[RMDB]
An RNA of 207 nucleotides, treated with 2A3 and DMS and read out base by base.
The data come from the RNA Mapping Database (RMDB), library OK3TST.
Reactivities are given for positions 27 through 156.
As a SHAPE reagent, 2A3 marks flexible, mostly unpaired nucleotides at the ribose 2'-OH.
RNA sequence: GGGAACGACUCGAGUAGAGUCGAAAACGAUGAGCCCACCGCGGCACUAAACUCGACGGACGUCGCUCAUCUCUUCAAGGUCAUCCGCGAUCUGAAGGCGCAAGGCAAGGCCGUCGUCUACAUCUCGCAUCGGAUGAACGAGGUGUUCGAGCUGUGCCAUAAAGGUACAUUUCGAUGUACCUUUAUGAAAAGAAACAACAACAACAAC
Reactivity to 2A3 in 0.01 (KOAc 150mM, MgCl2 10mM, bicine 150mM(pH8.5), 24C), signal-to-noise 9, nucleotides 027 to 156: c060g070a080u090g020a010g040c020c030c010a040c050c070g060c070g030g000c020a010c050u120a090a120a050c030u040c040g030a040c040g060g010a040c030g030u070c040g020c020u030c010a080u010c020u000c010u060u050c070a160a110g040g000u010c010a090u060c090c100g080c120g070a020u000c020u010g010a010a010g040g000c050g000c090a120a100g060g000c050a060a070g090g000c010c010g040u050c000g000u000c010u020a020c010a020u010c010u010c010g030c050a150u100c100g200g060a110u170g030a100a020c020g010a010g000g010u010g010u050u080c040g000a010g000c040u030g010u020g030c000
Reactivity to DMS in 0.01 (KOAc 150mM, MgCl2 10mM, bicine 150mM(pH8.5), 24C), signal-to-noise 5, nucleotides 027 to 156: c030g030a040u000g010a060g030c000c050c030a100c040c030g030c040g000g060c030a080c040u000a080a080a060c020u000c010g020a040c030g000g010a080c040g010u010c070g010c020u000c010a040u000c020u010c020u000u010c030a080a100g020g010u000c020a150u000c120c150g030c130g010a050u000c030u000g020a090a080g020g020c060g000c080a090a100g010g010c050a130a100g020g010c030c020g010u000c010g010u000c020u000a060c030a030u000c000u000c010g000c040a140u010c040g020g010a170u010g000a080a040c010g010a010g020g040u000g020u000u010c050g000a110g060c020u000g010u000g010c030